[RMDB]
Overview: Conditions: 150 mM KOAc, 10 mM MgCl2 and 150 mM bicine (pH 8.5), 24 C. This 177-nucleotide RNA was probed chemically with DMS. Values cover nucleotides 27 to 126.
RNA sequence: GGGAACGACUCGAGUAGAGUCGAAAACAGAAAGCGUCUAGCCAUGGCGUUAGUAUGAGUGUCGUGCAGCCUCCAGGCCCCCCCCUCCCGGGAGAGCCAUAGUAGUCUGCGGAACCGGUGAGUACACGUUAUUACGUGCGUUCGCGCACGUAAUAACAAAAGAAACAACAACAACAAC
Reactivity to DMS in 0.01 (KOAc 150mM, MgCl2 10mM, bicine 150mM(pH8.5), 24C), signal-to-noise 1, nucleotides 027 to 126: c040a030g020a080a130a300g000c010g010u000c010u020a130g030c210c230a100u010g010g000c030g010u000u030a040g010u010a100u000g000a080g000u000g010u000c040g010u000g010c010a120g000c080c020u000c060c040a040g020g000c010c000c000c000c000c000c000c000u000c000c030c040g000g010g000a070g020a130g000c060c040a040u010a020g010u000a100g040u000c040u000g040c050g010g010a130a140c030c000g000g010u020g010a130g000u010a060c130a080c170